[RMDB]
RNA sequence: GGGAACGACUCGAGUAGAGUCGAAAAGCGAAGAAUGAUACAGGAUGAAAAAAACAUAUUAUGAGAUUUUUCAGGAUGGAUUCUUUUAGGUAUCUAUCGAAACCAUUCUGAUGAUCAAUACAGUAUUGAUUUAAUCAAUAUUCGUAUUGAUUAAAUCAAAAGAAACAACAACAACAAC
Reactivity to 2A3 in 0.01 (KOAc 150mM, MgCl2 10mM, bicine 150mM(pH8.5), 24C), signal-to-noise 9, nucleotides 027 to 126: g040c040g030a040a020g050a080a120u110g050a040u100a100c050a050g100g050a100u130g110a050a040a020a030a000a070a020c060a030u200a040u170u200a090u150g090a090g010a090u020u060u040u060u040c000a000g010g000a000u000g020g000a020u020u010c030u040u160u030u050a030g070g020u210a090u180c020u010a010u030c030g000a010a010a010c000c000a000u010u000c000u000g020a010u010g000a000u010c000a000a040u100a060c050a020g120u140a100u030u020
Reactivity to DMS in 0.01 (KOAc 150mM, MgCl2 10mM, bicine 150mM(pH8.5), 24C), signal-to-noise 4, nucleotides 027 to 126: g020c090g010a070a070g000a100a080u020g000a070u020a070c080a080g010g000a090u010g000a000a010a070a070a080a080a120c040a070u010a060u020u010a060u010g010a220g000a050u000u000u010u010u000c010a010g000g000a010u000g000g010a060u000u000c010u010u000u000u010a010g010g010u050a040u040c010u000a010u000c120g000a020a010a080c030c000a000u000u000c000u000g010a010u020g010a000u000c010a040a040u010a020c060a010g010u000a020u010u000